Structure probing data (DMS) for a 177-nucleotide construct.
[RMDB]
RNA sequence: GGGAACGACUCGAGUAGAGUCGAAAAGAUAUGGAUGGAGGGAGAACCUCGGUCGGAAACGACCGAGUUCGAGGAUCUCCUGUCCUAAGUCAAAAGUGAAGGUCAGUCUUCGGACUGACCUUCACAACUAUCGUAGGGUGUUCGCACCCUACGAUAGAAAAGAAACAACAACAACAAC
Reactivity to DMS in 0.01 (KOAc 150mM, MgCl2 10mM, bicine 150mM(pH8.5), 24C), signal-to-noise 2, nucleotides 027 to 126: g010a050u010a300u010g010g010a040u010g000g000a060g000g010g000a030g010a010a010c190c050u000c000g020g020u010c000g000g000a130a090a170c040g020a010c000c010g000a030g000u000u000c010g000a050g010g010a000u000c000u000c000c000u010g000u000c000c000u000a080a170g010u010c090a090a120a110a120g010u000g000a040a010g010g000u000c000a030g010u000c000u000u010c170g030g000a020c020u020g000a000c000c000u000u000c000a000c010a020a140
High DMS reactivity at an A or C suggests that its Watson-Crick edge is free. The reactions ran in a buffer of 150 mM KOAc, 10 mM MgCl2 and 150 mM bicine (pH 8.5), at 24 C. Source: RMDB library TTRDEL, as collected in RNAgym. For DMS the reverse transcriptase was MarathonRT.